About this RNA:
Chemical mapping of a 207-nucleotide RNA with DMS and 2A3. In probing experiments dimethyl sulfate is read out at A N1 and C N3, which are open when not base-paired. The data come from the RNA Mapping Database (RMDB), library RNAMAK. Values cover nucleotides 27 to 156. The reactions ran in a buffer of 150 mM KOAc, 10 mM MgCl2 and 150 mM bicine (pH 8.5), at 24 C.
RNA sequence: GGGAACGACUCGAGUAGAGUCGAAAAGUAUAUUCGUAUACGUUAUGGGGGUCAUUCAGAGAUCCGUAGAUGGGGAGAGCUGAAGCCUCCACGGCUCGAGGAUCCGGAGGAUCGACGAAGAAUGACGGAGGCACCCGUGUGAGUAGUUCGCUACUAAUCAUACAUUAUAGUUCGCUAUAAUGUAUGAAAAAGAAACAACAACAACAAC
Reactivity to DMS in 0.01 (KOAc 150mM, MgCl2 10mM, bicine 150mM(pH8.5), 24C), signal-to-noise 5, nucleotides 027 to 156: g030u000a000u000a020u000u010c190g020u000a050u000a010c020g000u010u000a100u000g020g010g020g040g020u000c020a060u020u000c030a150g010a300g000a020u000c010c000g010u010a100g030a150u010g000g000g010g000a260g010a070g000c010u000g020a060a080g030c020c010u000c000c020a230c020g010g000c000u000c000g020a210g030g000a120u000c000c010g000g010a160g050g010a020u000c010g020a300c150g000a100a130g000a060a050u000g000a060c020g020g020a040g030g070c030a080c020c000c020g010u000g000u000g010a100g020u000a110g020u000u000c100g020c040u000a140c100u000a110a300
Reactivity to 2A3 in 0.01 (KOAc 150mM, MgCl2 10mM, bicine 150mM(pH8.5), 24C), signal-to-noise 5, nucleotides 027 to 156: g020u020a030u010a010u040u180c160g000u050a030u030a030c060g030u130u230a210u300g000g000g010g010g000u010c010a010u000u020c000a010g060a000g000a140u010c030c020g050u300a010g020a010u010g010g000g020g030a110g000a010g010c000u020g020a030a010g000c000c000u000c010c000a010c010g000g000c000u000c010g050a110g100g120a150u050c000c000g020g000a010g000g000a000u010c010g030a050c050g060a070a130g030a020a030u010g000a000c020g000g000a000g000g000c010a010c000c010c000g010u100g020u030g060a080g010u020a020g010u040u120c200g030c100u040a020c020u040a050a100